[RMDB]
The record gives the reactivity of an RNA of 177 nucleotides to 2A3 and DMS.

RNA sequence: GGGAACGACUCGAGUAGAGUCGAAAAGAUAUGGAGGUCGAUAGGGAGCUCGCACAUCGGAAACGAUGUGGAGCGAAGAACUAUCUUUGGACCUCCUAAGUCAAAGUGUCUCGUUCGCGAGACACAACUUUGCAUUCAUGUUCGCAUGAAUGCAAAGAAAAGAAACAACAACAACAAC
Reactivity to 2A3 in 0.01 (KOAc 150mM, MgCl2 10mM, bicine 150mM(pH8.5), 24C), signal-to-noise 2, nucleotides 027 to 126: g010a000u040a010u110g000g000a010g000g020u070c050g030a010u010a010g000g050g030a040g030c000u020c120g300c020a000c000a010u000c010g000g030a030a030a010c000g000a000u000g000u000g020g000a000g000c000g010a120a000g000a010a000c000u010a020u050c000u220u170u150g210g110a040c000c010u000c010c000u010a020a000g000u000c050a100a140a150g010u000g000u020c030u000c030g030u080u090c300g010c000g130a000g000a000c010a000c000a020a000
Reactivity to DMS in 0.01 (KOAc 150mM, MgCl2 10mM, bicine 150mM(pH8.5), 24C), signal-to-noise 2, nucleotides 027 to 126: g000a000u010a110u010g000g000a030g030g000u000c060g000a010u000a010g010g030g010a090g000c000u000c010g000c000a000c000a000u000c000g030g000a030a040a050c010g020a020u010g020u000g000g010a000g020c000g000a070a130g000a130a200c010u000a060u000c010u000u000u030g050g000a060c000c000u010c000c000u000a000a100g000u000c030a130a140a100g010u000g020u000c000u000c000g020u000u010c210g010c020g000a020g010a000c000a000c020a050a120
Values cover nucleotides 27 to 126. Conditions: 150 mM KOAc, 10 mM MgCl2 and 150 mM bicine (pH 8.5), 24 C. For DMS the reverse transcriptase was MarathonRT. The data come from the RNA Mapping Database (RMDB), library TTRDES. 2A3 adducts were read by reverse transcription with SuperScript II with manganese.